Record summary:
Structure probing data (DMS and 2A3) for a 177-nucleotide construct. The reactions ran in a buffer of 150 mM KOAc, 10 mM MgCl2 and 150 mM bicine (pH 8.5), at 24 C. It was measured as part of the RMDB library OK1LIB. For DMS the reverse transcriptase was MarathonRT.

[RMDB]
RNA sequence: GGGAACGACUCGAGUAGAGUCGAAAAGGGGAUCCUAGGCAAAUUUGAUUAUCACUUGAAACUGAUAGUUAUUCAGAGUGAUUGAGGCCAUCCACCCACAGUGUGUCCACCUAGAGUGCACCCAGCACCGGAGUGAUUACUUCGGUAAUCACUCCGGAAAAGAAACAACAACAACAAC
Reactivity to DMS in 0.01 (KOAc 150mM, MgCl2 10mM, bicine 150mM(pH8.5), 24C), signal-to-noise 1, nucleotides 027 to 126: g000g030g020g000a020u000c020c000u000a010g000g110c040a060a000a080u000u030u000g000a210u080u070a000u000c000a000c060u000u000g000a130a110a090c180u000g020a090u090a090g030u000u050a120u000u000c080a060g000a050g050u010g000a020u000u000g000a030g010g000c050c000a020u000c080c020a220c000c000c020a030c150a120g020u000g000u010g000u000c030c070a110c000c060u020a020g000a170g000u000g020c040a060c000c000c000a190g000c100a100
Reactivity to 2A3 in 0.01 (KOAc 150mM, MgCl2 10mM, bicine 150mM(pH8.5), 24C), signal-to-noise 3, nucleotides 027 to 126: g060g010g030g000a010u050c000c000u100a020g000g000c000a040a040a060u170u160u080g060a090u080u270a050u010c000a020c010u020u030g010a040a040a000c080u070g100a140u100a060g160u180u080a300u220u120c010a020g010a010g120u000g000a000u040u100g050a050g000g000c030c000a020u060c010c000a030c000c030c000a110c020a020g100u090g020u020g030u020c000c000a000c020c000u000a000g000a020g170u020g040c000a040c010c000c000a000g030c040a000